RNA sequence: GGGAACGACUCGAGUAGAGUCGAAAAGAAGAGAAUAAAUAGAGGAGUCAGGGUUCGCACACGCUCCGCGAACCUACGGUAACACUGACUGUGGAGCGGAAAAGGCAGAUACGUUACUGCCAAAGAAGAUUAUGGCGAUAUUCGUAUCGCCAUAAUCAAAAGAAACAACAACAACAAC
Reactivity to 2A3 in 0.01 (KOAc 150mM, MgCl2 10mM, bicine 150mM(pH8.5), 24C), signal-to-noise 8, nucleotides 027 to 126: g120a020a010g080a000g070a090a110u230a140a100a030u210a070g090a040g160g010a030g020u010c030a030g020g000g010u000u000c000g000c000a010c010a010c100g020c000u010c000c010g010c000g000a010a010c000c000u010a020c050g030g030u060a070a010c050a010c120u050g060a020c010u060g090u110g100g000a010g000c010g020g000a070a160a010a010g010g010c010a000g010a030u110a160c080g030u070u120a040c000u000g000c000c000a020a010a020g060a050a010
Reactivity to DMS in 0.01 (KOAc 150mM, MgCl2 10mM, bicine 150mM(pH8.5), 24C), signal-to-noise 3, nucleotides 027 to 126: g010a080a060g000a060g010a100a070u010a050a040a120u040a080g010a090g030g020a030g040u000c030a060g000g000g000u000u000c010g000c000a070c180a140c030g030c040u000c000c020g000c000g000a020a020c030c010u010a020c110g000g000u010a040a050c160a180c150u000g010a030c050u020g000u030g000g000a020g000c010g000g000a040a030a170a080g000g000c010a010g010a120u020a030c200g000u000u020a050c020u010g000c010c010a040a040a060g010a150a120